[RMDB]
RNA sequence: GGGAACGACUCGAGUAGAGUCGAAAAGAUAUGGAAUCGUGGAGCUCGAUAAGUUGGUCUCGGAAACGAGACGCAACUUUUGACGAGUUAAGCGAUUCCUAAGUCAAAAGCUGACUUCGGUCAGCAAGCAGUGUAUGGUGUUCGCACCAUACACUGCAAAAGAAACAACAACAACAAC
Reactivity to DMS in 0.01 (KOAc 150mM, MgCl2 10mM, bicine 150mM(pH8.5), 24C), signal-to-noise 1, nucleotides 027 to 126: g040a010u000a300u020g000g000a010a000u000c000g050u010g010g020a270g010c020u000c020g020a100u000a000a010g040u000u020g000g000u000c020u020c000g050g050a110a090a230c000g000a010g010a000c040g030c010a020a010c000u000u000u000u000g000a260c170g000a020g010u000u000a120a250g000c000g000a020u000u040c000c000u000a000a110g000u000c040a050a060a280a090g000c000u000g000a020c000u000u010c250g030g010u000c000a030g020c000a050a090
Source: RMDB library TTRDES, as collected in RNAgym. Structure probing data (DMS) for a 177-nucleotide construct. The reactions ran in a buffer of 150 mM KOAc, 10 mM MgCl2 and 150 mM bicine (pH 8.5), at 24 C. DMS adducts were read by reverse transcription with MarathonRT.